[RMDB]
RNA sequence: GGGAACGACUCGAGUAGAGUCGAAAAAGACUUAAGUGCAUGUGAGCUGGUAAGCUCUAAAACUACCACAAAUAAAUAAACGCAAACAACGCAAAUUACGCUCCAGCUUACGCAAAAGUCGCGUAAGUUUAUCACACUUUUGGAGUCGGCUUAAGAAGACCUUACGAUACUUCGGUAUCGUAAGGUCAAAAGAAACAACAACAACAAC
Reactivity to 2A3 in 0.01 (KOAc 150mM, MgCl2 10mM, bicine 150mM(pH8.5), 24C), signal-to-noise 2, nucleotides 027 to 156: a000g030a000c010u040u030a050a020g000u040g080c130a040u080g060u040g170a030g000c010u030g000g000u050a140a000g000c000u000c090u060a000a050a050a030c010u000a000c000c000a050c150a120a110a130u190a040a060a040u120a040a130a000c040g030c070a100a130a110c040a110a060c040g000c010a080a120a140u150u050a010c060g000c030u000c000c000a010g000c000u020u000a000c000g000c000a000a010a090a190g060u130c100g000c000g000u000a020a010g000u000u030u140a080u090c010a000c020a090c060u100u040u110u090g040g020a010g020u090c010g090g020c000u020u050a030a000g010a100a000
Structure probing data (2A3) for a 207-nucleotide construct. It was measured as part of the RMDB library ARCHII. Conditions: 150 mM KOAc, 10 mM MgCl2 and 150 mM bicine (pH 8.5), 24 C. 2A3 adducts were read by reverse transcription with SuperScript II with manganese.